[RMDB]
RNA sequence: GGGAACGACUCGAGUAGAGUCGAAAACGUCUUUUCGAAGACGAUUCAGAUAUGGAGCAAUGUGGCGUCGUCGAAGAACUUGGUUCGGAAACGAACCAAGGGAGACGACGAACUACCACCUCUUGCUCCUAAGUCAACUGCGCGGGUUCGCCCGCAAUUCCCAUUAAAACUUCGGUUUUAAUGGGAAAAAAGAAACAACAACAACAAC
Reactivity to DMS in 0.01 (KOAc 150mM, MgCl2 10mM, bicine 150mM(pH8.5), 24C), signal-to-noise 1, nucleotides 027 to 156: c010g000u010c000u000u000u000u000c300g010a060a010g030a040c000g010a230u010u000c060a150g000a040u000a040u010g000g010a050g010c020a230a010u010g000u010g000g000c040g030u000c000g000u000c030g000a140a300g000a120a260c000u000u010g010g000u000u000c000g030g000a060a080a070c000g000a010a010c000c020a000a000g000g010g000a120g000a070c030g000a010c000g020a000a020c000u000a300c000c000a040c020c000u010c010u010u000g000c010u000c020c000u000a000a040g010u000c010a090a200c140u000g000c120g000c030g000g000g020u000u010c200g000c000c000c000g040c000a050a040
Reactivity to 2A3 in 0.01 (KOAc 150mM, MgCl2 10mM, bicine 150mM(pH8.5), 24C), signal-to-noise 1, nucleotides 027 to 156: c000g000u030c020u070u070u040u040c180g100a050a000g030a020c010g030a050u230u170c060a050g000a000u010a000u000g000g000a000g000c010a000a050u300g070u020g020g000c000g000u000c000g000u000c010g120a300a000g000a000a010c000u000u000g010g000u000u000c000g000g000a000a000a000c000g000a000a000c040c010a010a000g000g000g000a010g000a000c000g000a000c010g000a010a000c000u120a080c050c000a000c000c000u000c000u000u000g000c040u000c000c030u000a000a000g000u000c000a020a060c100u280g080c060g000c000g140g010g000u080u110c170g130c020c000c010g020c040a020a010
An RNA of 207 nucleotides, treated with DMS and 2A3 and read out base by base.
Values are in units of 0.01, from 0 to 300, in steps of 10.
DMS (dimethyl sulfate) methylates the pairing face of unpaired adenines and cytosines.